Description
Source: RMDB library OK1LIB, as collected in RNAgym. Chemical mapping of a 177-nucleotide RNA with 2A3 and DMS. For DMS the reverse transcriptase was MarathonRT. The reactions ran in a buffer of 150 mM KOAc, 10 mM MgCl2 and 150 mM bicine (pH 8.5), at 24 C. For 2A3, 1,571 sequencing reads were counted.

RNA sequence: GGGAACGACUCGAGUAGAGUCGAAAAGCGUGGCUAUGGCCCGAGGUGGGGAAACCCGGUACGUGCCGUAUGUCGACUUCGGUGGCGGUGGAAUGGUGCUCGUGUGUCGUGGGUUCGAUACCUAUGCGAGUUUGCUACCAUUCGUGGUAGCAAACUCAAAAGAAACAACAACAACAAC
Reactivity to 2A3 in 0.01 (KOAc 150mM, MgCl2 10mM, bicine 150mM(pH8.5), 24C), signal-to-noise 3, nucleotides 027 to 126: g040c080g020u100g010g000c030u070a070u100g120g010c000c020c010g000a080g040g100u200g050g020g000g040a060a090a070c000c000c000g000g020u060a000c020g020u050g030c000c000g020u040a030u200g080u030c050g040a040c080u090u070c070g080g000u040g030g000c000g040g000u040g010g040a080a060u080g010g040u030g020c010u030c100g060u110g030u030g030u060c050g000u070g060g000g000u000u040c000g010a030u020a090c000c020u060a010u080g060c070
Reactivity to DMS in 0.01 (KOAc 150mM, MgCl2 10mM, bicine 150mM(pH8.5), 24C), signal-to-noise 1, nucleotides 027 to 126: g000c080g000u030g050g000c000u020a100u030g000g000c000c000c040g000a300g030g010u000g070g010g000g000a030a130a240c000c060c000g000g040u000a100c170g000u000g000c000c010g010u050a060u020g000u020c040g010a030c120u000u010c080g060g000u000g000g000c050g000g000u000g000g000a070a070u000g000g050u000g000c060u000c000g030u010g000u000g000u000c040g010u020g000g000g010u000u000c140g000a090u030a110c020c090u000a100u020g020c270